An RNA of 207 nucleotides, treated with 2A3 and read out base by base. The RNA was probed in 150 mM KOAc, 10 mM MgCl2 and 150 mM bicine (pH 8.5) at 24 C. For 2A3, 547 sequencing reads were counted. It was measured as part of the RMDB library VIROID.

RNA sequence: GGGAACGACUCGAGUAGAGUCGAAAACCUGCGGGCGCGAGGAAGGACACCCGAAGAAAGGAAGGGUGAAAACCCUGUUUCGGCGGGAAUUACUCCUGUCGGCCGCUGGGCACUCCCCACCGUCCUUUUUUGCCAGUUCGCUCCAGGUUUCCCCGGGGUAUAAUUCUAACUUCGGUUAGAAUUAUACAAAAGAAACAACAACAACAAC
Reactivity to 2A3 in 0.01 (KOAc 150mM, MgCl2 10mM, bicine 150mM(pH8.5), 24C), signal-to-noise 1, nucleotides 027 to 156: c020c010u020g050c140g010g010g000c040g000c000g000a120g020g030a040a020g070g020a010c030a190c100c110c090g100a150a030g100a150a050a050g100g010a070a230g020g000g000u170g030a080a040a010a060c000c000c000u020g020u010u110u100c030g010g000c010g030g000g070a050a100u300u120a090c070u030c010c000u050g000u020c000g030g020c020c020g000c070u000g000g010g000c030a030c070u020c030c000c000c000a010c010c110g030u020c000c000u020u040u080u060u100u100g110c060c030a080g010u120u110c030g000c000u000c040c000a020g000g000u000u030u020c010c000c000c010g000g010g000